[RMDB]
Structure probing data (DMS and 2A3) for a 207-nucleotide construct. For 2A3 the reverse transcriptase was SuperScript II with manganese. The RNA was probed in 150 mM KOAc, 10 mM MgCl2 and 150 mM bicine (pH 8.5) at 24 C.
RNA sequence: GGGAACGACUCGAGUAGAGUCGAAAAUACAAAUUCUUACGCAUUAGCUGCCUAAAAAACAGCCUGCGUGAUCUUCACAAGAUUGUUUGCGUUUUGCUAGAAGGUCUUAUUUAUCAGCAAACUACGUUUGGCUACUGUCUAGUUAGUUAAAAAGAGACUUUGAUAUAGGGUUCGCCCUAUAUCAAAGAAAAGAAACAACAACAACAAC
Reactivity to DMS in 0.01 (KOAc 150mM, MgCl2 10mM, bicine 150mM(pH8.5), 24C), signal-to-noise 2, nucleotides 027 to 156: u000a110c040a040a100a210u000u000c090u000u000a040c010g000c000a100u010u000a020g020c000u000g010c010c000u000a000a060a130a170a090a010c010a000g010c010c060u000g030c000g050u000g000a050u000c030u010u000c030a060c020a030a030g000a090u000u010g020u010u000u010g030c030g020u000u000u010u000g010c040u000a110g010a070a060g010g000u010c050u000u000a090u030u000u000a100u020c060a080g000c020a030a050a060c020u000a080c110g000u010u000u000g030g020c020u000a030c020u000g000u010c040u000a050g030u000u000a060g010u010u000a040a060a060a040a130g010a260g000a140
Reactivity to 2A3 in 0.01 (KOAc 150mM, MgCl2 10mM, bicine 150mM(pH8.5), 24C), signal-to-noise 4, nucleotides 027 to 156: u230a010c030a020a080a050u130u080c040u110u080a010c010g000c000a020u150u110a030g010c000u010g000c010c020u090a070a060a000a000a010a010c000a000g000c010c010u010g010c000g010u010g000a010u000c020u050u010c010a000c010a060a010g000a050u050u090g060u020u020u030g000c010g010u000u000u040u040g040c050u060a080g010a020a010g000g000u000c000u030u100a220u080u120u090a160u150c040a010g010c000a000a000a060c030u040a020c040g020u000u020u030g030g000c010u020a010c010u060g100u180c020u020a050g060u130u010a010g010u010u040a050a060a020a030a000g060a010g030a040